[RMDB]
RNA sequence: GGGAACGACUCGAGUAGAGUCGAAAAUUGAACGGAUUCGUCCGUUCAACGCGUGCGAUCCAAACGUAGUACAAAAGUACAGACGAAAGCACAAGGAACAAAUGAUACAGCCGUUCGCGGCUGUAAAUAUGGUGCAUGUUUUCGAACAUGCACCAUAAAAAGAAACAACAACAACAAC
Reactivity to 2A3 in 0.01 (KOAc 150mM, MgCl2 10mM, bicine 150mM(pH8.5), 24C), signal-to-noise 1, nucleotides 027 to 126: u040u020g000a020a000c000g010g030a000u050u010c230g030u010c110c000g040u000u010c000a010a030c020g070c000g000u010g010c010g050a050u030c000c010a010a120a000c020g010u060a010g000u010a030c060a050a300a040a060g030u020a010c040a040g140a020c010g010a060a020a010g010c000a000c030a060a040g110g040a080a100c090a060a150a020u200g040a010u060a060c010a000g000c000c000g020u030u050c180g000c000g140g000c000u000g000u000a010a010a010
Reactivity to DMS in 0.01 (KOAc 150mM, MgCl2 10mM, bicine 150mM(pH8.5), 24C), signal-to-noise 2, nucleotides 027 to 126: u000u000g010a010a000c010g000g010a040u000u010c130g020u010c000c000g010u000u000c000a000a020c180g000c200g010u000g000c040g010a110u000c090c030a110a070a180c090g010u010a050g000u010a030c010a190a080a040a100g010u000a040c060a090g010a110c110g000a120a020a100g010c030a010c010a120a290g000g010a090a080c140a070a040a060u000g000a300u000a010c000a020g000c000c000g000u010u020c300g010c000g000g000c010u010g000u000a000a080a060
Structure probing data (2A3 and DMS) for a 177-nucleotide construct. The DMS profile rests on 1,003 reads. The RNA was probed in 150 mM KOAc, 10 mM MgCl2 and 150 mM bicine (pH 8.5) at 24 C. As a SHAPE reagent, 2A3 marks flexible, mostly unpaired nucleotides at the ribose 2'-OH. The data come from the RNA Mapping Database (RMDB), library M2PK50. For 2A3 the reverse transcriptase was SuperScript II with manganese.